[RMDB]
Record summary:
The record gives the reactivity of an RNA of 177 nucleotides to DMS and 2A3. 2A3 adducts were read by reverse transcription with SuperScript II with manganese. Source: RMDB libraries RFM100 and RFMREP, as collected in RNAgym. High DMS reactivity at an A or C suggests that its Watson-Crick edge is free. The reactions ran in a buffer of 150 mM KOAc, 10 mM MgCl2 and 150 mM bicine (pH 8.5), at 24 C. Values cover nucleotides 27 to 126.

RNA sequence: GGGAACGACUCGAGUAGAGUCGAAAAGAGUAGGUAUAAAGAUGCCAGUGCCGGGGCCACGCGGAGUACGAUCGAGGGUACAGCACUAGGACGCCCAUUAGGGGAAGAGCUAAAUUUUAGUUUAAGUAAUGUAUCCGUUUUUCGAAACGGAUACAUUAAAAGAAACAACAACAACAAC
Reactivity to DMS in 0.01 (KOAc 150mM, MgCl2 10mM, bicine 150mM(pH8.5), 24C), signal-to-noise 3, nucleotides 027 to 126: g000a100g000u010a030g010g030u020a060u030a020a040a040g020a300u020g010c010c010a010g000u000g000c010c010g040g010g000g000c030c000a010c010g000c010g020g000a180g000u030a010c010g000a070u040c030g000a080g000g000g000u010a020c020a020g000c010a020c010u010a120g000g000a030c010g010c010c000c000a180u010u040a110g020g000g010g000a020a060g010a100g000c060u000a020a070a120u020u010u010u020a080g010u000u010u000a080a110g030u010
Reactivity to 2A3 in 0.01 (KOAc 150mM, MgCl2 10mM, bicine 150mM(pH8.5), 24C), signal-to-noise 7, nucleotides 027 to 126: g110a020g070u140a050g070g040u150a120u070a100a050a020g070a050u270g010c000c010a000g000u000g000c010c000g010g000g020g000c010c000a000c000g000c010g000g030a020g050u300a020c000g050a140u030c010g010a120g010g010g000u010a020c010a010g000c000a010c000u020a030g020g010a010c010g020c000c010c000a050u060u220a100g030g020g000g010a040a030g040a030g060c050u080a070a160a260u140u180u090u130a060g020u000u020u060a070a030g030u010